[RMDB]
The record gives the reactivity of an RNA of 177 nucleotides to DMS. The reactions ran in a buffer of 150 mM KOAc, 10 mM MgCl2 and 150 mM bicine (pH 8.5), at 24 C.
RNA sequence: GGGAACGACUCGAGUAGAGUCGAAAAGAUAUGGACGAGCGGUCUAUGUCGUACGCGCGAUAAGCUCAGGGUCGGAAACGACCCGAGCUUUUGACGCGUUGAAACAUAGACCGCUCGUCCUAAGUCAGAUACAAGAGGAGUUCGCUCCUCUUGUAUCAAAAGAAACAACAACAACAAC
Reactivity to DMS in 0.01 (KOAc 150mM, MgCl2 10mM, bicine 150mM(pH8.5), 24C), signal-to-noise 2, nucleotides 027 to 126: g000a050u010a300u000g020g010a010c010g010a040g040c000g000g050u000c000u000a000u000g000u000c050g010u010a090c020g010c000g000c030g010a070u000a010a020g000c000u000c010a120g060g000g010u000c000g010g000a100a090a220c020g030a030c000c000c010g010a000g020c000u000u000u000u020g010a110c000g020c000g030u010u000g000a120a140a010c000a000u000a000g000a010c000c010g000c010u000c010g000u000c000c000u000a010a060g010u000c080a140